This 207-nucleotide RNA was probed chemically with 2A3. Values cover nucleotides 27 to 156. The data come from the RNA Mapping Database (RMDB), library RNAMAK.
[RMDB]
RNA sequence: GGGAACGACUCGAGUAGAGUCGAAAAGUCCUUUCGAGGACGCAUUUGAUAUGGAUCUGCUAAUCUCCAUGGGAGUAUCGGGUCGGAAACGAUCUCUAGCGUGUACGAAGAACAUGGAGACAACAGAUCCUAAGUCUCACUUACGGUUCGCCGUAAAUGGAAUGGUACUCUUCGGAGUACCAUUCCAAAAAGAAACAACAACAACAAC
Reactivity to 2A3 in 0.01 (KOAc 150mM, MgCl2 10mM, bicine 150mM(pH8.5), 24C), signal-to-noise 2, nucleotides 027 to 156: g000u000c000c000u090u080u040c260g110a000g000g000a000c010g070c010a160u080u100u260g100a110u030a080u190g000g000a000u020c000u010g020c110u160a100a030u080c000u000c000c000a000u030g040g000g000a090g000u030a020u010c030g000g000g030u010c030g000g000a080a030a050c000g000a000u000c050u000c090u140a060g030c020g100u250g000u080a000c020g140a300a080g030a020a000c000a000u050g000g000a000g030a040c010a010a000c000a000g010a000u000c000c000u000a000a000g020u000c000u000c090a140c080u060u120a030c010g040g030u020u050c120g050c140c030g060u000a300a050a000
Reactivities are rounded to 0.1 and cut off at 0 and 3. 2A3 adducts were read by reverse transcription with SuperScript II with manganese.